The record gives the reactivity of an RNA of 207 nucleotides to DMS and 2A3. The RNA was probed in 150 mM KOAc, 10 mM MgCl2 and 150 mM bicine (pH 8.5) at 24 C. The 2A3 profile rests on 12,756 reads. For DMS, 10,254 sequencing reads were counted.
RNA sequence: GGGAACGACUCGAGUAGAGUCGAAAAUUAGGGAUUACUUUGAGGAAGAAGAAGUUCCUGGGGAUGGCAAUUGCUUCUUCUAUGCCAUCAGCUACCUUCUCUUUGGGAACUUGAAAGAGUGGAGAGCUGUUAAGUCUACUGUAGAAAGGUGGUCAUCCUGGAUAGAUUAUUUCGAUAAUCUAUCCAGAAAAGAAACAACAACAACAAC
Reactivity to DMS in 0.01 (KOAc 150mM, MgCl2 10mM, bicine 150mM(pH8.5), 24C), signal-to-noise 4, nucleotides 027 to 156: u000u000a120g010g020g010a110u000u000a050c050u000u000u010g020a110g010g000a060a070g000a080a110g000a090a120g030u000u000c030c010u000g010g000g020g010a100u000g020g000c040a060a110u000u000g010c070u000u010c040u000u000c060u000a120u000g010c030c030a090u000c030a080g000c020u000a040c010c010u000u000c050u040c020u000u000u000g020g000g000a050a080c060u000u000g010a050a050a050g010a070g040u000g020g010a090g010a100g010c020u000g020u010u010a030a090g020u000c030u000a080c040u000g020u010a090g010a060a070a090g000g030u000g010g020u010c020a210u010c030
Reactivity to 2A3 in 0.01 (KOAc 150mM, MgCl2 10mM, bicine 150mM(pH8.5), 24C), signal-to-noise 9, nucleotides 027 to 156: u100u060a070g010g010g030a010u070u060a110c030u100u080u150g050a060g040g030a030a060g010a030a010g030a030a010g040u030u030c020c020u070g020g000g020g010a010u020g010g010c030a080a160u090u090g050c050u060u090c010u110u030c030u070a080u090g020c010c010a040u030c010a020g020c010u050a090c020c000u090u130c030u020c000u060u060u060g050g010g040a060a050c000u050u060g030a080a060a030g030a020g000u030g010g050a090g000a010g080c030u020g040u090u070a060a010g010u000c040u050a060c070u120g010u040a030g050a070a050a030g030g010u020g000g010u040c010a020u060c010
For DMS the reverse transcriptase was MarathonRT.